[RMDB]
RNA sequence: GGGAACGACUCGAGUAGAGUCGAAAAAGCUUUCUCUGCACAAAAUCCAAUUGGAAGAUUUGUGUAAAUGUUUGAAAACCACUCAGAGCAUUGAUAAUCCAUGGGAGAAUGAUAGAGACCACGAAGAAAUCGUGAUAGUAUUCGUACUAUCACGAUUAAAAGAAACAACAACAACAAC
Reactivity to 2A3 in 0.01 (KOAc 150mM, MgCl2 10mM, bicine 150mM(pH8.5), 24C), signal-to-noise 9, nucleotides 027 to 126: a000g010c010u010u030u000c000u000c020u020g010c020a010c010a030a050a020a070u000c020c020a090a300u200u240g060g010a070a060g060a200u010u020u010g030u000g000u020a030a070a080u090g040u030u050u080g090a070a050a020a030c040c020a050c040u050c030a020g000a010g050c010a030u050u080g060a050u150a150a050u030c030c030a060u090g040g040g020a060g040a050a080u090g040a050u070a080g080a000g030a030c020c020a050c090g040a040a090g110a050
Reactivity to DMS in 0.01 (KOAc 150mM, MgCl2 10mM, bicine 150mM(pH8.5), 24C), signal-to-noise 7, nucleotides 027 to 126: a140g020c090u020u010u000c000u000c030u010g000c020a030c020a020a030a050a090u010c000c010a300a160u030u040g020g000a070a100g010a090u010u000u000g010u000g000u010a040a090a050u010g000u000u010u010g010a050a050a090a130c130c070a040c040u000c010a060g000a120g010c020a040u000u000g000a090u030a070a080u010c050c040a070u010g010g000g000a040g000a070a050u010g000a070u010a080g000a080g000a090c070c030a050c120g010a090a100g000a060
Structure probing data (2A3 and DMS) for a 177-nucleotide construct. The data come from the RNA Mapping Database (RMDB), library OK1LIB. Values cover nucleotides 27 to 126. The DMS profile rests on 16,711 reads. Conditions: 150 mM KOAc, 10 mM MgCl2 and 150 mM bicine (pH 8.5), 24 C.